[RMDB]
RNA sequence: GGGAACGACUCGAGUAGAGUCGAAAAUGUAAGUCCCGUAUUCAACUUGUGCCGCACAGGGCAGGUUGAGGGCCAGACACUGCGCUAUCCCGCAGGGCGACCGAUACACGGGUGUUCGUGAUCGUAUCACAGUAAAUUUCUUCGGAAAUUUACUGUGAAAAGAAACAACAACAACAAC
Reactivity to 2A3 in 0.01 (KOAc 150mM, MgCl2 10mM, bicine 150mM(pH8.5), 24C), signal-to-noise 1, nucleotides 027 to 126: u200g020u110a010a040g080u030c040c000c000g030u100a160u070u070c000a000a010c020u040u040g040u130g300c020c010g150c030a120c100a190g010g020g000c000a000g040g000u010u000g020a050g030g010g010c030c010a040g060a080c040a010c120u040g000c010g030c020u130a080u130c010c000c020g000c010a010g010g060g000c030g010a050c030c000g020a040u040a130c040a030c060g130g000g040u080g100u160u100c060g010u050g060a070u010c000g010u090a020u080
Reactivity to DMS in 0.01 (KOAc 150mM, MgCl2 10mM, bicine 150mM(pH8.5), 24C), signal-to-noise 2, nucleotides 027 to 126: u000g000u000a040a100g010u000c000c010c020g000u000a070u030u000c030a020a020c030u000u000g010u000g010c010c000g000c300a120c200a130g000g010g020c000a010g000g010u000u000g010a050g010g020g010c050c180a100g020a120c070a080c020u010g020c010g020c120u010a100u000c110c140c010g000c030a050g010g000g010c020g010a040c080c010g010a090u010a060c060a030c020g000g000g020u000g030u010u020c050g020u010g000a060u000c020g010u000a120u000